[RMDB]
RNA sequence: GGGAACGACUCGAGUAGAGUCGAAAAUAGCUGACGUUCGCGUCAGCUAAAAGCACCAAAACCUCCUGGCGGUGCGGCGCCGGGCCCGCCGGGAAGGCCGCCAACUCGAUGGGUUCGCCCAUCGAAACGGAAAUCUAUAAUUCGUUAUAGAUUUCCGAAAAGAAACAACAACAACAAC
Reactivity to 2A3 in 0.01 (KOAc 150mM, MgCl2 10mM, bicine 150mM(pH8.5), 24C), signal-to-noise 4, nucleotides 027 to 126: u030a000g000c000u000g010a010c000g030u030u030c260g020c000g100u020c000a000g000c000u000a000a000a000a000g000c010a070c070c010a030a030a090a140c000c010u010c000c010u000g000g000c000g000g030u110g050c030g020g040c050g030c020c030g030g040g000c010c010c000g000c010c000g000g000g010a010a020g020g000c030c010g060c020c000a050a070c050u010c010g010a000u000g000g000g050u030u040c240g070c020c000c000a000u010c000g000a020a000a000
Reactivity to DMS in 0.01 (KOAc 150mM, MgCl2 10mM, bicine 150mM(pH8.5), 24C), signal-to-noise 5, nucleotides 027 to 126: u000a010g000c000u000g000a010c000g020u000u000c220g030c010g020u000c000a000g000c000u000a010a010a060a140g000c160a180c030c030a070a060a100a250c040c010u000c010c000u000g000g010c010g010g020u000g000c020g010g010c070g000c050c040g000g000g000c030c010c010g020c010c020g000g000g000a020a030g010g010c080c070g010c040c120a060a110c170u000c010g010a010u000g000g000g010u010u010c180g020c010c000c000a000u000c010g000a010a050a140